This 177-nucleotide RNA was probed chemically with 2A3. The RNA was probed in 150 mM KOAc, 10 mM MgCl2 and 150 mM bicine (pH 8.5) at 24 C.
[RMDB]
RNA sequence: GGGAACGACUCGAGUAGAGUCGAAAAGUUUUUUUACUUAUUCAAUGAAGCGGAACUGGGCUUUACCGCCCAACUUCUAGCGUUAAGGUCCUUCGCGGGCUGAUCCGGGUUGAAGACAUUGUCAGGUCGGUUACGAGAUAUUCGUAUCUCGUAACCGAAAAGAAACAACAACAACAAC
Reactivity to 2A3 in 0.01 (KOAc 150mM, MgCl2 10mM, bicine 150mM(pH8.5), 24C), signal-to-noise 1, nucleotides 027 to 126: g000u000u000u010u000u000u120u180a020c030u020u030a130u120u060c010a000a030u130g120a070a020g010c050g140g050a110a070c020u030g050g000g020c000u060u060u040a060c000c030g000c000c000c000a020a030c000u010u000c000u020a130g030c030g030u070u100a080a000g000g010u020c000c000u060u010c210g020c130g060g010g000c070u070g000a060u120c010c060g060g050g020u090u000g010a050a050g000a000c090a150u000u060g040u070c020a000g000g000u020